[RMDB]
RNA sequence: GGGAACGACUCGAGUAGAGUCGAAAAGAUAUGGAGUUAUUGAUUCUUUGAUCGUGCACGACAACGUAACAUCCAUCGGAAACGAUGGUGGUUGUCGUGCACGGGAGAAUCGGGUAACUCCUAAGUCCAUGCUUUAAUACUUCGGUAUUAAAGCAUGAAAAGAAACAACAACAACAAC
Reactivity to DMS in 0.01 (KOAc 150mM, MgCl2 10mM, bicine 150mM(pH8.5), 24C), signal-to-noise 7, nucleotides 027 to 126: g000a110u010a300u010g010g010a030g010u000u000a010u000u000g010a020u000u000c000u000u010u010g010a100u020c000g030u000g000c000a010c000g000a020c000a010a010c000g020u000a010a020c260a030u020c000c000a010u000c010g000g000a160a100a240c000g000a020u000g000g020u000g010g010u000u000g000u000c000g000u000g000c000a000c000g000g000g010a000g010a010a000u000c000g010g010g010u000a000a020c000u000c000c000u000a010a090g010u010c040
Reactivity to 2A3 in 0.01 (KOAc 150mM, MgCl2 10mM, bicine 150mM(pH8.5), 24C), signal-to-noise 6, nucleotides 027 to 126: g090a020u120a100u300g020g010a000g000u020u030a040u080u120g040a020u040u020c030u300u220u110g180a240u280c010g000u010g000c000a000c000g030a000c010a010a000c010g040u090a040a020c050a300u150c020c000a010u010c000g040g000a130a080a040c010g000a000u010g000g000u010g020g010u010u010g000u000c000g010u000g010c000a000c000g000g000g000a010g010a010a000u000c040g000g060g000u000a000a000c000u000c000c010u030a240a010g010u000c040
Structure probing data (DMS and 2A3) for a 177-nucleotide construct.
Values cover nucleotides 27 to 126.
The reactions ran in a buffer of 150 mM KOAc, 10 mM MgCl2 and 150 mM bicine (pH 8.5), at 24 C.
For 2A3, 24,333 sequencing reads were counted.
It was measured as part of the RMDB library TTRINS.
2A3 adducts were read by reverse transcription with SuperScript II with manganese.